[RMDB]
RNA sequence: GGGAACGACUCGAGUAGAGUCGAAAAGAUAUGGAAUUUCCAAUAGUCUCGCGGGAUGGGAGAAGUAUCUCGGAAACGAGAUAUACUUCGAGGAUCAUUUGCGAGACUAUUGGAAAUUCCUAAGUCACAUACAACUACUCUUCGGAGUAGUUGUAUGAAAAGAAACAACAACAACAAC
Reactivity to DMS in 0.01 (KOAc 150mM, MgCl2 10mM, bicine 150mM(pH8.5), 24C), signal-to-noise 3, nucleotides 027 to 126: g030a030u000a300u020g010g000a030a010u000u010u000c000c000a010a020u000a010g010u010c000u000c000g020c010g000g020g020a020u000g000g000g000a300g010a040a020g000u000a010u000c010u000c010g000g000a090a120a280c000g010a000g000a090u010a040u010a080c020u000u000c010g000a300g000g000a020u010c010a050u000u000u000g060c000g000a010g010a010c010u000a000u000u000g010g000a000a000a000u000u000c000c000u000a020a080g000u010c060a270

An RNA of 177 nucleotides, treated with DMS and read out base by base. For DMS, 2,479 sequencing reads were counted. The data come from the RNA Mapping Database (RMDB), library TTRINS. The RNA was probed in 150 mM KOAc, 10 mM MgCl2 and 150 mM bicine (pH 8.5) at 24 C. DMS adducts were read by reverse transcription with MarathonRT.